[RMDB]
RNA sequence: GGGAACGACUCGAGUAGAGUCGAAAAACGCAGAAGACCAUUGCCAGCGCAAACCACUUCUUUACCGGUCAGGGCGAAGAACUGAUCGAGGAAUGUUCGGAAUAUCUGGAUCGCCGCCUUGCGGGCAUGACUAGCUACUAUUCGUAGUAGCUAGUCAAAAAGAAACAACAACAACAAC
Reactivity to DMS in 0.01 (KOAc 150mM, MgCl2 10mM, bicine 150mM(pH8.5), 24C), signal-to-noise 7, nucleotides 027 to 126: a100c080g010c080a060g010a100a080g010a120c040c040a060u000u010g000c030c020a040g010c090g020c090a070a090a130c040c030a090c070u000u000c030u000u000u000a120c080c010g010g010u000c030a030g000g010g020c060g010a100a080g000a050a070c040u000g000a020u000c020g020a080g000g010a060a050u010g010u000u000c080g020g010a090a080u000a060u010c040u010g010g000a080u000c070g010c070c030g010c040c040u010u000g010c050g000g000g020c130a090
Reactivity to 2A3 in 0.01 (KOAc 150mM, MgCl2 10mM, bicine 150mM(pH8.5), 24C), signal-to-noise 5, nucleotides 027 to 126: a000c060g000c040a030g030a190a010g050a040c020c010a060u030u120g020c010c000a030g030c030g020c110a030a030a050c020c000a030c020u050u020c000u050u140u100a110c040c010g040g000u030c020a000g030g000g030c100g070a110a070g020a100a060c030u050g000a020u030c020g010a040g030g070a090a050u140g030u110u130c050g020g050a080a040u070a060u130c030u030g040g010a080u030c050g000c030c000g000c010c020u010u060g010c030g000g010g000c020a060